Source: RMDB library OK2TRN, as collected in RNAgym. The record gives the reactivity of an RNA of 177 nucleotides to 2A3 and DMS. DMS (dimethyl sulfate) methylates the pairing face of unpaired adenines and cytosines. 2A3 adducts were read by reverse transcription with SuperScript II with manganese.

RNA sequence: GGGAACGACUCGAGUAGAGUCGAAAAAUAGAGGUGCCGACUACCGGCGAGAACAGCGAAACCUAAGGUUGGAAGUAUAUCCAUGCAAGCGCUAACUGCGGCCCUCAAGGUAUGCUUUGACGACGGAACGUUAUUCUAGAUUCGUCUAGAAUAACGUAAAAGAAACAACAACAACAAC
Reactivity to 2A3 in 0.01 (KOAc 150mM, MgCl2 10mM, bicine 150mM(pH8.5), 24C), signal-to-noise 9, nucleotides 027 to 126: a000u160a020g050a010g030g050u090g020c010c010g060a110c030u110a070c030c060g030g000c020g010a070g020a060a040c070a020g050c030g060a130a060a070c010c020u070a120a060g130g000u050u060g040g020a020a020g080u140a080u050a030u240c020c020a010u080g030c030a070a050g050c010g000c030u050a090a050c080u120g020c010g020g020c010c000c000u020c030a000a000g030g010u080a040u180g020c000u100u060u080g050a040c050g000a010c030g010g050a080
Reactivity to DMS in 0.01 (KOAc 150mM, MgCl2 10mM, bicine 150mM(pH8.5), 24C), signal-to-noise 9, nucleotides 027 to 126: a120u010a100g010a070g020g020u010g030c020c020g010a160c120u000a120c130c060g010g000c030g010a090g010a100a100c170a090g010c040g010a110a100a070c040c020u010a100a080g010g010u000u000g010g010a040a150g010u010a050u000a070u000c020c030a070u000g010c110a070a090g000c040g010c020u000a070a090c160u000g000c030g010g000c020c010c020u000c070a080a050g000g000u000a040u010g000c030u000u000u000g010a090c050g010a060c090g010g010a150
The RNA was probed in 150 mM KOAc, 10 mM MgCl2 and 150 mM bicine (pH 8.5) at 24 C.